[RMDB]
RNA sequence: GGGAACGACUCGAGUAGAGUCGAAAAUAACUUGAUGCAACCUCGACAACUUGUGUUCCGGCCCGAAGUUCUCUGGAAUCACCCGAUUCAGCGAGUUAUACAUAAUGAACUGGAGCAAUACUGCCGAUACUCCAAUGCAGUUCGCUGCAUUGGAGUAAAAAGAAACAACAACAACAAC
Reactivity to 2A3 in 0.01 (KOAc 150mM, MgCl2 10mM, bicine 150mM(pH8.5), 24C), signal-to-noise 1, nucleotides 027 to 126: u080a000a000c040u040u050g030a030u110g010c000a000a110c010c010u020c010g020a010c030a090a130c010u080u070g000u000g060u150u000c030c040g020g000c010c040c000g030a050a050g010u060u010c030u010c050u070g020g060a020a040u040c010a030c050c030c020g000a050u070u030c010a010g070c020g010a000g030u060u040a050u020a030c020a020u300a140a110u210g040a030a030c030u010g000g040a010g000c050a010a070u120a100c050u030g040c010c000g000a010
Reactivity to DMS in 0.01 (KOAc 150mM, MgCl2 10mM, bicine 150mM(pH8.5), 24C), signal-to-noise 2, nucleotides 027 to 126: u040a020a100c110u010u020g020a080u000g000c040a050a110c040c040u000c080g030a060c050a090a090c060u000u000g000u000g010u000u000c030c020g010g000c080c000c020g000a060a110g000u000u020c010u040c020u000g000g010a070a030u010c090a080c100c050c100g000a050u000u000c040a060g000c050g010a090g020u000u000a070u000a080c190a060u000a110a040u000g010a050a040c050u020g010g000a070g030c030a050a070u000a060c130u000g020c060c000g020a200